[RMDB]
RNA sequence: GGGAACGACUCGAGUAGAGUCGAAAACAGAGGAAGAAACAAGACAGAGGAGCCCCCAUGACGCUGGUGAACCAUCGCGAGCUGGGAGAGGAGAGGCGAAGAUAGCAGCGGAGACCCCGGUCCGAAUAACGAAGUUGCUUCGGCAACUUCAAAAGAAACAACAACAACAAC
Reactivity to 2A3 in 0.01 (KOAc 150mM, MgCl2 10mM, bicine 150mM(pH8.5), 24C), signal-to-noise 5, nucleotides 027 to 129: c050a010g030a020g030g020a030a000g000a010a140a010c080a040a050g070a020c040a020g020a020g030g030a010g000c000c000c000c000c000a060u080g020a010c040g020c050u040g030g030u090g040a030a010c050c010a070u060c040g000c030g040a020g000c030u070g010g020g010a060g000a010g020g000a020g010a010g000g000c030g010a010a000g020a030u120a020g020c060a010g040c030g010g000a020g040a070c020c010c000c000g020g020u030c030c020g050a070a050u160a090a060c110
Reactivity to DMS in 0.01 (KOAc 150mM, MgCl2 10mM, bicine 150mM(pH8.5), 24C), signal-to-noise 7, nucleotides 027 to 129: c100a020g020a060g000g000a000a000g020a010a040a040c130a100a020g020a080c150a070g030a060g040g000a060g000c030c040c020c020c050a090u050g030a120c090g000c050u030g050g020u030g020a040a090c030c020a050u040c070g020c070g000a000g030c110u020g010g050g010a070g030a060g060g010a050g020a030g030g010c190g020a000a000g000a060u040a000g040c130a080g020c170g010g000a070g020a090c060c090c030c030g010g010u000c010c000g040a100a060u060a000a070c220
Background
Chemical mapping of a 170-nucleotide RNA with 2A3 and DMS. For 2A3, 12,974 sequencing reads were counted. The RNA was probed in 150 mM KOAc, 10 mM MgCl2 and 150 mM bicine (pH 8.5) at 24 C. The data come from the RNA Mapping Database (RMDB), library 15KLIB. 2A3 adducts were read by reverse transcription with SuperScript II with manganese. The DMS profile rests on 18,377 reads.